Structure probing data (2A3 and DMS) for a 177-nucleotide construct. The DMS profile rests on 1,002 reads. For 2A3, 1,332 sequencing reads were counted. The reactions ran in a buffer of 150 mM KOAc, 10 mM MgCl2 and 150 mM bicine (pH 8.5), at 24 C. For 2A3 the reverse transcriptase was SuperScript II with manganese.
RNA sequence: GGGAACGACUCGAGUAGAGUCGAAAAGCUUUCGCGUUCGCGCGAAAGCAAAGUUACGUAGUCGUUGGUCACAAAUUACGGACAAUGGCAUAAUUAAAAUAAAAACAGAUAUGUUCGCAUAUCUGAAGAUACUAGAAUGCUUCGGCAUUCUAGUAUCAAAAGAAACAACAACAACAAC
Reactivity to 2A3 in 0.01 (KOAc 150mM, MgCl2 10mM, bicine 150mM(pH8.5), 24C), signal-to-noise 2, nucleotides 027 to 126: g030c010u000u020u000c000g010c020g010u050u140c250g000c000g000c000g080a000a000a000g020c010a020a000a000g020u010u130a040c150g050u080a020g000u030c030g040u010u030g060g110u030c010a000c050a230a250a270u230u120a160c130g020g000a020c070a080a020u010g000g030c030a030u080a120a080u300u150a110a170a090a090u190a080a100a000a030a010c000a000g000a000u000a000u000g010u040u060c120g000c060a010u000a000u010c000u000g010a020a030
Reactivity to DMS in 0.01 (KOAc 150mM, MgCl2 10mM, bicine 150mM(pH8.5), 24C), signal-to-noise 1, nucleotides 027 to 126: g000c000u000u000u000c010g040c000g030u030u040c260g020c020g050c020g020a000a030a030g030c000a020a050a040g010u040u000a030c110g010u010a080g010u000c030g010u010u010g050g020u020c050a160c090a110a090a080u000u010a040c170g000g000a020c050a010a040u020g000g010c020a150u000a050a090u010u000a000a120a040a130u010a070a020a110a110a170c020a000g000a000u000a010u000g020u010u020c150g000c020a020u000a000u000c000u000g000a040a050